[RMDB]
RNA sequence: GGGAACGACUCGAGUAGAGUCGAAAAUAGCUGCAACAUUAUUUGAGUAUCCUGAAAACGGGCUUUUCAGAAUGGUGUUGCUGUAUAAAAUUGUAGGAGUGCAUAGUGGCCCGUAUAGCAGGCAUUAGAGAGCUACAGAUGUUCGCAUCUGUAGCAACUUGUCUGUGUAGUUCGCUACACAGACAAGAAAAGAAACAACAACAACAAC
Reactivity to 2A3 in 0.01 (KOAc 150mM, MgCl2 10mM, bicine 150mM(pH8.5), 24C), signal-to-noise 2, nucleotides 027 to 156: u060a020g030c010u020g020c000a020a030c000a030u070u030a030u080u060u020g000a020g030u080a090u130c000c020u030g090a000a000a040a040c070g020g000g000c040u090u060u070u130c060a070g050a140a040u020g080g010u000g020u010u000g000c000u010g050u000a080u030a000a110a040a090u070u100g030u100a050g000g080a030g020u020g030c040a060u040a100g050u020g090g040c000c030c010g000u020a020u030a040g090c050a020g040g000c000a000u020u100a050g040a020g000a010g110c000u000a000c000a000g000a000u010g020u060u090c200g010c090a000u000c000u000g000u000a000g000c000a000a000
Reactivity to DMS in 0.01 (KOAc 150mM, MgCl2 10mM, bicine 150mM(pH8.5), 24C), signal-to-noise 1, nucleotides 027 to 156: u010a150g010c030u000g000c040a070a130c010a090u000u000a120u000u000u040g000a300g030u000a060u000c020c000u000g000a030a040a070a110c090g010g020g070c100u000u000u030u000c010a110g000a010a030u000g020g010u000g000u000u010g010c000u010g010u000a040u000a050a070a090a160u000u000g020u000a080g000g000a110g000u000g010c020a080u000a080g020u000g000g000c000c000c010g000u000a040u000a090g040c050a070g000g000c030a080u010u000a100g020a120g020a190g020c000u000a000c000a020g000a000u000g030u010u020c300g010c000a020u000c000u000g020u000a010g000c000a010a000
Description: Chemical mapping of a 207-nucleotide RNA with 2A3 and DMS. Conditions: 150 mM KOAc, 10 mM MgCl2 and 150 mM bicine (pH 8.5), 24 C. The DMS profile rests on 2,600 reads. Source: RMDB library M2RFPK, as collected in RNAgym. DMS (dimethyl sulfate) methylates the pairing face of unpaired adenines and cytosines. Reactivities are given for positions 27 through 156.